[RMDB]
RNA sequence: GGGAACGACUCGAGUAGAGUCGAAAAAGCGAUAUUCGUAUCGCUGGAGUCCGAUGAUUGAAACGAGAGUGAGCUGAAAGAUGAUGACCGACUUCUCGCUGAGGGUAGCAUAGCGUUCGCGCUAUGCGUUACUAAAUCUUUUCGAAGAUUUAGUAACAAAAGAAACAACAACAACAAC
Reactivity to 2A3 in 0.01 (KOAc 150mM, MgCl2 10mM, bicine 150mM(pH8.5), 24C), signal-to-noise 9, nucleotides 027 to 126: a000g000c010g000a010u010a010u030u130c210g020u030a000u010c000g000c000u010g020g010a040g070u010c010c040g020a070u120g030a040u050u220g080a120a080a030c040g010a010g000a000g080u070g030a030g020c050u050g070a080a070a070g110a090u160g020a050u100g040a070c020c030g020a050c010u090u020c020u030c030g020c050u050g040a080g040g060g050u090a030g000c000a000u000a000g000c000g010u030u040c230g000c000g000c070u000a000u000g000c010
Reactivity to DMS in 0.01 (KOAc 150mM, MgCl2 10mM, bicine 150mM(pH8.5), 24C), signal-to-noise 9, nucleotides 027 to 126: a010g010c000g010a010u000a010u000u010c190g020u000a010u000c010g020c000u000g000g010a180g010u010c010c020g010a110u010g010a140u000u000g000a070a080a090c060g000a060g000a070g010u000g000a080g010c050u000g010a080a110a080g010a100u010g010a100u010g010a110c060c030g000a090c060u000u000c010u000c040g020c060u000g000a110g010g000g010u010a120g010c000a010u000a000g010c000g020u000u010c210g010c020g010c000u000a000u000g010c010

Source: RMDB library RFMREP, as collected in RNAgym. Chemical mapping of a 177-nucleotide RNA with 2A3 and DMS. The RNA was probed in 150 mM KOAc, 10 mM MgCl2 and 150 mM bicine (pH 8.5) at 24 C. The DMS profile rests on 28,561 reads. For DMS the reverse transcriptase was MarathonRT.